RNA sequence: GGGAACGACUCGAGUAGAGUCGAAAAGCCACCUGUCUGGUGCCAUGACCAGCACGUUCUUAUUACUGAUGACCGUGGUCUUCAUGUUGUUUGAAGUAGAACGGAUGCCGUAUAAAGUGCAAUUGAAGUAAUGAUACGGGUUCGCCCGUAUCAUUACAAAAGAAACAACAACAACAAC
Reactivity to 2A3 in 0.01 (KOAc 150mM, MgCl2 10mM, bicine 150mM(pH8.5), 24C), signal-to-noise 3, nucleotides 027 to 126: g110c010c010a030c040c050u090g070u140c040u050g010g000u010g050c050c050a080u080g090a030c010c040a000g000c020a010c010g010u000u050c030u040u140a230u120u120a090c100u030g060a070u070g060a020c040c000g030u060g010g130u050c000u120u120c080a070u060g030u210u070g070u030u170u030g030a030a010g010u070a030g020a070a010c030g050g020a090u120g050c040c020g040u090a090u060a140a180a040g120u150g100c020a110a150u090u120g070a160a040
Reactivity to DMS in 0.01 (KOAc 150mM, MgCl2 10mM, bicine 150mM(pH8.5), 24C), signal-to-noise 4, nucleotides 027 to 126: g000c050c040a120c130c080u010g020u020c040u000g010g010u000g020c050c100a090u010g000a100c010c040a040g000c040a080c050g020u000u000c030u010u030a100u010u000a060c080u010g010a090u000g010a060c010c040g040u000g020g010u000c060u010u000c020a050u010g010u010u000g000u000u000u010g000a090a050g020u000a070g000a080a020c030g010g010a110u000g010c000c070g000u000a130u010a050a060a090g020u000g000c050a080a110u000u010g000a100a140